[RMDB]
About this RNA
Chemical mapping of a 207-nucleotide RNA with 2A3 and DMS.

RNA sequence: GGGAACGACUCGAGUAGAGUCGAAAAGAUGUUCGCUGAUUCGUCAGCCGCAUGCCCAGGUGGCCGCGAUCUUCAAGGCUAGGGCGCGGAUAGGUCCGCGCUGAUCGUUUUCCUCCAACGACGCUAUAAAAGGAACGAAGGUUCGCCUUCGUUCCAACAAAAGAGGAGGGUUCGCCCUCCUCUUUUGAAAAGAAACAACAACAACAAC
Reactivity to 2A3 in 0.01 (KOAc 150mM, MgCl2 10mM, bicine 150mM(pH8.5), 24C), signal-to-noise 3, nucleotides 027 to 156: g070a020u040g000u090u160c090g000c010u020g010a030u040u110c230g060u020c050a000g000c010c030g010c010a010u070g010c000c000c000a030g050g110u040g010g010c000c020g070c060g070a050u020c010u070u060c030a080a000g030g000c010u020a030g020g020g020c010g000c020g000g020a040u150a250g110g140u020c000c000g000c000g000c010u020g020a020u000c010g020u040u020u140u120c020c030u050c040c010a060a030c060g110a040c040g030c080u070a040u110a270a080a080a050g010g000a000a000c000g010a000a020g000g000u050u120c210g110c040c000u000u010c000g010u000u000c000c000a000a000
Reactivity to DMS in 0.01 (KOAc 150mM, MgCl2 10mM, bicine 150mM(pH8.5), 24C), signal-to-noise 3, nucleotides 027 to 156: g010a060u000g020u000u000c060g010c010u000g010a060u000u000c250g030u010c000a030g000c000c070g010c050a030u000g020c010c000c020a200g020g010u000g020g030c020c040g050c050g030a040u000c030u000u000c060a140a250g020g000c040u000a210g000g010g010c000g020c010g010g000a180u000a130g040g020u010c010c010g030c000g020c000u020g000a070u000c040g010u000u010u010u000c020c010u000c040c050a100a090c030g020a060c050g050c060u000a110u010a050a060a110a140g020g010a030a020c000g010a030a020g020g020u000u000c260g050c020c000u000u000c000g000u000u000c000c000a010a020

For 2A3, 1,899 sequencing reads were counted. DMS adducts were read by reverse transcription with MarathonRT.